An RNA of 177 nucleotides, treated with DMS and 2A3 and read out base by base.
For 2A3 the reverse transcriptase was SuperScript II with manganese.
Source: RMDB library M2PK90, as collected in RNAgym.
RNA sequence: GGGAACGACUCGAGUAGAGUCGAAAAAGGCAGCUUCCCGGCUUUUAAGCUACGGACGAUGCAAACGUAGCAGGCAUCGAAUUUUCGGCCCUUCGAAAAGCUGAGAUGAGCUCACCAAGGGAAUCAAUCUUUGAGAUAAAUUCGUUUAUCUCAAAGAAAAAGAAACAACAACAACAAC
Reactivity to DMS in 0.01 (KOAc 150mM, MgCl2 10mM, bicine 150mM(pH8.5), 24C), signal-to-noise 6, nucleotides 027 to 126: a060g010g010c120a030g010c070u000u000c020c000c020g010g010c010u010u010u000u000a060a130g000c010u000a030c020g010g010a090c090g010a080u010g010c110a070a090a160c030g010u000a020g010c020a120g010g010c020a060u000c040g030a060a230u010u000u000u000c020g000g000c070c020c050u000u000c140g000a070a070a070a040g000c020u000g000a090g010a060u010g000a100g010c020u000c060a120c040c040a060a090g000g000g000a090a070u010c100a090a090
Reactivity to 2A3 in 0.01 (KOAc 150mM, MgCl2 10mM, bicine 150mM(pH8.5), 24C), signal-to-noise 2, nucleotides 027 to 126: a010g030g010c010a000g030c000u040u000c010c010c000g010g000c000u060u070u020u130a080a030g000c000u010a010c020g020g070a030c060g130a120u220g130c100a140a080a020c020g020u020a020g000c020a010g040g000c010a060u130c090g030a110a130u110u040u070u070c000g030g000c010c010c020u080u080c030g030a010a010a050a000g000c040u020g020a010g000a150u110g030a000g010c010u020c020a050c010c010a040a040g070g020g010a030a100u060c030a030a060